[RMDB]
RNA sequence: GGGAACGACUCGAGUAGAGUCGAAAAGAUAUGGAGGCUGAUGACCUAGGCCUGGAUCGGAAACGAUCCUGGCUAGUAGCAAGGCCUCCUAAGUCAAAAGUCAUCAGGAGUUCGCUCCUGAUGACAAUCUAUGAGGACCGUUCGCGGUCCUCAUAGAAAAAGAAACAACAACAACAAC
Reactivity to DMS in 0.01 (KOAc 150mM, MgCl2 10mM, bicine 150mM(pH8.5), 24C), signal-to-noise 1, nucleotides 027 to 126: g000a070u000a170u000g000g000a000g000g010c000u000g000a300u010g010a200c300c070u000a050g000g010c010c000u000g010g040a000u000c000g000g000a030a070a080c000g010a030u000c000c000u010g000g000c000u010a020g000u010a010g090c040a140a300g000g030c000c000u000c000c000u040a020a080g010u000c010a060a130a180a090g000u000c010a040u000c000a000g000g000a000g000u000u000c230g010c020u010c000c000u000g010a000u000g000a000c000a010a040